[RMDB]
RNA sequence: GGGAACGACUCGAGUAGAGUCGAAAACGUACGUGGAGACACGUACGACGAGACUUCGGUCUCGAAUCGCACGAACUGGUGCCGUGCGCGAGUGAGGCGUCGGUGGUCGUCGAGUCCAUGGAUGCAAUAACUCGCUCGUAAAUAAAUUACAUUAGAACACCGUGCUAUAUUUCGAUAUAGCACGGUGAAAAGAAACAACAACAACAAC
Reactivity to DMS in 0.01 (KOAc 150mM, MgCl2 10mM, bicine 150mM(pH8.5), 24C), signal-to-noise 1, nucleotides 027 to 156: c000g080u000a010c000g050u000g000g010a300g010a300c000a000c000g130u010a000c000g020a080c020g040a250g010a030c000u000u010c300g060g000u000c000u010c010g020a000a060u000c030g000c000a060c080g010a070a000c070u000g000g000u000g040c200c030g080u000g000c060g000c020g010a060g000u000g040a140g000g000c020g090u000c010g040g060u000g010g000u030c070g110u000c260g010a150g030u000c040c020a060u000g020g010a020u010g000c020a130a070u010a070a300c000u020c010g010c040u000c010g000u000a040a050a110u010a040a090a100u000u000a000c090a080u000u010a090g000a140a300
Reactivity to 2A3 in 0.01 (KOAc 150mM, MgCl2 10mM, bicine 150mM(pH8.5), 24C), signal-to-noise 3, nucleotides 027 to 156: c000g000u000a000c000g000u010g000g000a030g030a040c000a000c010g010u000a000c000g000a020c000g000a010g000a000c020u090u170c270g070g000u010c000u000c000g000a020a030u080c010g010c010a000c000g030a130a000c070u100g040g080u140g070c080c000g000u010g000c010g010c010g000a000g000u000g000a000g000g040c000g000u000c040g070g010u000g000g020u030c060g100u100c110g060a050g050u010c000c000a010u020g210g000a000u000g000c010a080a170u050a290a080c000u000c000g000c000u010c010g020u040a020a040a020u190a060a040a010u150u170a070c090a070u110u120a070g030a090a000
Overview
Chemical mapping of a 207-nucleotide RNA with DMS and 2A3. Reactivities are given for positions 27 through 156. Source: RMDB library OK3TST, as collected in RNAgym. 2A3 adducts were read by reverse transcription with SuperScript II with manganese. The 2A3 profile rests on 2,244 reads. The reactions ran in a buffer of 150 mM KOAc, 10 mM MgCl2 and 150 mM bicine (pH 8.5), at 24 C.